RNA sequence: GGGAACGACUCGAGUAGAGUCGAAAAACACGUAACGACUCCAGCACAACAAAAACAAAAUCGCGGAGGCGCAGCUAACUGAUUCUUUUGGAGAGGAGUUGCUGUCGGGACCCGUCCCGCAGCCAGUAUGUGGAUUACCUUUCGAGGUAAUCCACAUAAAAGAAACAACAACAACAAC
Reactivity to 2A3 in 0.01 (KOAc 150mM, MgCl2 10mM, bicine 150mM(pH8.5), 24C), signal-to-noise 3, nucleotides 027 to 126: a000c040a010c050g110u060a100a040c040g040a010c010u000c010c040a080g080c100a020c030a070a170c050a010a150a040a050a000c050a020a130a040a000u130c080g040c030g040g020a000g020g000c020g050c050a070g020c040u090a010a070c040u050g040a110u080u070c050u030u090u050u240g080g060a110g030a060g060g000a010g030u110u040g040c020u060g090u230c050g000g000g010a040c040c010c050g140u170c020c000c010g000c000a000g000c010c000a040g030u070
Reactivity to DMS in 0.01 (KOAc 150mM, MgCl2 10mM, bicine 150mM(pH8.5), 24C), signal-to-noise 2, nucleotides 027 to 126: a050c060a040c140g000u040a080a080c100g000a010c000u000c040c010a150g030c160a140c230a000a150c180a000a080a130a110a070c180a100a060a100a090u010c000g000c030g010g000a110g000g000c020g020c120a040g020c070u030a020a100c020u000g040a170u040u000c030u000u040u000u040g000g060a110g000a100g000g000a000g000u040u020g020c000u020g010u040c040g100g020g000a020c140c070c180g000u000c000c000c000g020c000a090g000c010c140a030g030u000
The record gives the reactivity of an RNA of 177 nucleotides to 2A3 and DMS. As a SHAPE reagent, 2A3 marks flexible, mostly unpaired nucleotides at the ribose 2'-OH. For 2A3, 1,233 sequencing reads were counted. The data come from the RNA Mapping Database (RMDB), library RFM100. For DMS the reverse transcriptase was MarathonRT. Conditions: 150 mM KOAc, 10 mM MgCl2 and 150 mM bicine (pH 8.5), 24 C. Values cover nucleotides 27 to 126. For 2A3 the reverse transcriptase was SuperScript II with manganese. The DMS profile rests on 1,226 reads. High DMS reactivity at an A or C suggests that its Watson-Crick edge is free.